[RMDB]
RNA sequence: GGGAACGACUCGAGUAGAGUCGAAAAUACCUGAAUACAACUUUAUCAUCUACGACUCAUCAGAUCGUGGCCAGGAAAGUUUAGCUAGGUCUGCAUGUGUUUAUUAUUCUCAAGUCUUGUGUAAAUCGAGCAUUGAGGUUCGCCUCAAUGAAAAGAAACAACAACAACAAC
Reactivity to DMS in 0.01 (KOAc 150mM, MgCl2 10mM, bicine 150mM(pH8.5), 24C), signal-to-noise 6, nucleotides 027 to 129: u000a000c030c000u020g030a080a060u070a090c050a000a000c090u000u000u000a070u050c050a110u020c070u000a000c130g020a060c000u020c040a090u000c020a060g020a080u010c000g040u040g000g060c000c050a130g060g050a110a110a110g000u000u070u040a100g030c010u030a110g030g030u000c020u030g000c180a050u000g020u000g000u020u050u020a070u040u030a080u010u000c000u030c040a000a080g000u060c040u000u000g030u060g000u050a070a110a100u000c020g030a080g020
Reactivity to 2A3 in 0.01 (KOAc 150mM, MgCl2 10mM, bicine 150mM(pH8.5), 24C), signal-to-noise 9, nucleotides 027 to 129: u110a030c000c010u000g080a050a040u150a080c090a080a070c070u110u120u140a130u140c070a060u000c030u140a050c050g050a010c010u000c030a060u010c000a040g020a020u000c030g270u170g000g000c010c040a080g140g080a140a140a080g130u140u190u130a030g010c020u020a020g020g010u020c000u010g030c060a010u030g010u000g000u030u030u020a030u030u020a080u110u060c110u020c050a040a170g080u030c040u090u080g020u020g030u100a040a070a090u120c020g000a010g030
This 170-nucleotide RNA was probed chemically with DMS and 2A3.
Conditions: 150 mM KOAc, 10 mM MgCl2 and 150 mM bicine (pH 8.5), 24 C.
Source: RMDB library 15KLIB, as collected in RNAgym.
For 2A3 the reverse transcriptase was SuperScript II with manganese.